[RMDB]
RNA sequence: GGGAACGACUCGAGUAGAGUCGAAAAGAUAUGGACCUUGGAGCUUUUGACGCUCAGGUAUCGGAAACGAUACCGUGAGCGAUAAGCUCCCGGGUCCUAAGUCAAAACAGAGCCGUUCGCGGCUCUGGUUCAUUAUUCGGUUCGCCGAAUAAUGAACAAAAGAAACAACAACAACAAC
Reactivity to 2A3 in 0.01 (KOAc 150mM, MgCl2 10mM, bicine 150mM(pH8.5), 24C), signal-to-noise 4, nucleotides 027 to 126: g010a000u020a010u060g000g000a000c000c000u000u020g000g000a000g000c030u160u260u250u300g300a240c120g000c000u000c010a000g000g000u000a010u000c000g000g000a020a000a020c010g000a000u010a000c010c000g140u030g000a000g000c000g020a020u080a090a010g000c000u010c000c000c000g010g000g000u000c000c000u000a000a000g000u000c000a000a000a050a080c020a010g000a000g020c000c030g090u140u180c300g030c070g160g000c040u020c000u010g010
Reactivity to DMS in 0.01 (KOAc 150mM, MgCl2 10mM, bicine 150mM(pH8.5), 24C), signal-to-noise 4, nucleotides 027 to 126: g000a020u000a160u010g000g000a000c000c000u000u000g010g000a010g020c000u000u000u000u010g010a230c120g040c000u010c000a080g000g010u000a000u000c010g010g000a020a030a070c000g010a010u000a010c000c000g010u010g020a010g010c000g010a030u010a010a020g010c000u000c000c000c040g000g000g020u000c000c000u000a000a060g000u000c010a140a090a170a300c010a010g000a010g020c010c010g040u000u010c230g030c020g010g000c000u000c000u000g000

The record gives the reactivity of an RNA of 177 nucleotides to 2A3 and DMS. Conditions: 150 mM KOAc, 10 mM MgCl2 and 150 mM bicine (pH 8.5), 24 C. The 2A3 profile rests on 12,268 reads. The data come from the RNA Mapping Database (RMDB), library TTRDES.